[RMDB]
RNA sequence: GGGAACGACUCGAGUAGAGUCGAAAAGUUGUAAGGAGUGGAAUUGAAUUAUGGCGUACACAACGUGCUUUACCGGGAUGUCCUGAUUUUCCACGAUCAUACGCUGCCAUUGUUAACCCUGGGAUUGCCAUCGAUUAGGGUUCGCCCUAAUCGAUGGAAAAGAAACAACAACAACAAC
Reactivity to DMS in 0.01 (KOAc 150mM, MgCl2 10mM, bicine 150mM(pH8.5), 24C), signal-to-noise 2, nucleotides 027 to 126: g000u010u010g020u010a030a130g000g000a160g010u000g010g040a030a050u010u010g000a050a060u010u000a060u010g010g010c080g040u000a070c170a130c160a070a130c110g020u000g010c110u010u000u000a070c060c050g040g010g000a140u000g010u000c030c030u010g010a040u000u000u000u000c030c020a040c110g000a060u000c080a060u000a030c050g000c010u000g010c060c050a110u010u010g020u010u020a070a140c050c020c030u010g000g020g000a130u000u000g000